Conditions: 150 mM KOAc, 10 mM MgCl2 and 150 mM bicine (pH 8.5), 24 C.
An RNA of 177 nucleotides, treated with 2A3 and DMS and read out base by base.
It was measured as part of the RMDB library M2PK50.
RNA sequence: GGGAACGACUCGAGUAGAGUCGAAAACUACGAUGCUUCGGCAUCGUAGAAAGAAAACUCAAGACGAAUGCGCUGUAAAACGUCUUGAGACAGCGCAAAGAAAAACUUGGUUCUUCGGAACCAAGAACAAAGGGUAACACUUCGGUGUUACCCUUUGAAAAGAAACAACAACAACAAC
Reactivity to 2A3 in 0.01 (KOAc 150mM, MgCl2 10mM, bicine 150mM(pH8.5), 24C), signal-to-noise 2, nucleotides 027 to 126: c010u010a000c010g000a000u010g000c020u050u070c300g160g000c030a010u000c000g000u010a000g000a000a010a000g000a000a020a010a020c030u030c030a030a000g040a010c020g090a270a090u130g010c030g000c050u050g020u070a010a000a030a040c020g020u000c020u050u030g000a020g000a000c000a000g000c040g000c010a040a120a020g100a010a090a010a030a020c010u010u000g000g010u030u000c000u020u030c170g060g000a020a000c000c000a000a000g000a000a000
Reactivity to DMS in 0.01 (KOAc 150mM, MgCl2 10mM, bicine 150mM(pH8.5), 24C), signal-to-noise 3, nucleotides 027 to 126: c000u000a010c010g000a010u000g040c000u000u010c240g050g010c000a010u000c000g000u000a000g000a020a080a090g000a090a060a100a080c040u000c030a020a040g000a030c020g000a150a170u000g000c020g010c040u000g010u000a030a030a080a070c010g010u020c000u010u000g000a130g010a030c050a020g000c020g030c040a080a100a140g000a070a080a070a090a130c010u000u000g010g000u000u000c000u000u000c140g020g000a010a000c000c000a000a000g010a080a110